[RMDB]
RNA sequence: GGGAACGACUCGAGUAGAGUCGAAAACGUAUGGCCUUGGAUCUACUAUCUCCUUAGCUCCGAACUUCUUGGCUGCUAUGUAACCUGCACCGAAGCUCAUUCCACCAUGGGUGAGGGUCGGACCAUCGGACUACGCUUAGUUCGCUAAGCGUAGUCCAAAAGAAACAACAACAACAAC
Reactivity to DMS in 0.01 (KOAc 150mM, MgCl2 10mM, bicine 150mM(pH8.5), 24C), signal-to-noise 2, nucleotides 027 to 126: c070g000u010a080u000g000g040c020c010u000u010g030g000a070u000c040u000a090c080u000a130u000c050u000c030c030u020u000a090g000c030u000c070c090g000a050a050c080u010u010c000u000u000g030g020c070u000g010c080u000a060u000g000u000a120a120c070c020u000g030c210a110c100c010g000a070a070g000c010u000c010a040u000u030c010c130a130c250c300a170u010g010g000g030u000g010a060g000g000g000u010c030g010g010a110c090c070a120u010c170
Reactivity to 2A3 in 0.01 (KOAc 150mM, MgCl2 10mM, bicine 150mM(pH8.5), 24C), signal-to-noise 2, nucleotides 027 to 126: c010g040u040a080u120g030g000c030c020u040u030g070g020a070u000c050u060a040c020u030a080u090c060u020c010c000u020u050a010g000c020u000c050c030g030a060a060c080u090u070c000u030u100g030g010c010u050g010c040u060a000u060g010u010a030a100c030c000u010g040c060a030c000c000g020a010a010g020c010u010c020a060u280u160c010c020a130c010c070a100u250g040g000g000u020g000a020g080g120g000u010c020g010g000a060c030c000a070u100c070